The record gives the reactivity of an RNA of 177 nucleotides to 2A3 and DMS. For 2A3 the reverse transcriptase was SuperScript II with manganese. Conditions: 150 mM KOAc, 10 mM MgCl2 and 150 mM bicine (pH 8.5), 24 C. It was measured as part of the RMDB libraries RFM100 and RFMREP. For DMS the reverse transcriptase was MarathonRT.

RNA sequence: GGGAACGACUCGAGUAGAGUCGAAAAGUUCAAAAGGCAAAGAAAAACCUCCUAAAUCUAUUAAUCGAACUUGAGACUGUAAAUUCCUCAUCUGUAAUAGCAGGCAGGUGGGGAGUUUUAGGUCCAGAUAUAAACCAUAAUUCGUUAUGGUUUAUAUAAAAGAAACAACAACAACAAC
Reactivity to 2A3 in 0.01 (KOAc 150mM, MgCl2 10mM, bicine 150mM(pH8.5), 24C), signal-to-noise 9, nucleotides 027 to 126: g020u040u050c030a080a050a030a050g070g010c080a100a110a110g120a090a170a070a040a040c010c020u060c010c010u090a110a090a060u040c040u050a130u170u190a190a090u160c080g040a040a050c010u070u080g050a060g010a210c010u010g020u100a010a030a010u010u000c000c000u000c000a000u000c000u000g010u030a060a160u070a300g130c090a050g260g000c000a000g000g010u000g000g000g000g000a000g000u000u000u000u020a020g000g000u000c010c000a000g040
Reactivity to DMS in 0.01 (KOAc 150mM, MgCl2 10mM, bicine 150mM(pH8.5), 24C), signal-to-noise 7, nucleotides 027 to 126: g020u000u000c020a070a080a100a080g010g020c100a060a080a120g020a070a100a080a120a110c060c060u000c040c020u010a080a090a090u030c050u010a080u030u020a100a070u010c080g010a050a080c070u000u000g000a120g010a020c000u000g010u010a020a000a010u000u000c000c000u000c000a000u000c000u000g020u000a080a070u010a090g020c230a060g010g010c000a000g000g030u000g000g010g000g010a000g000u000u000u000u000a180g000g000u000c000c030a110g000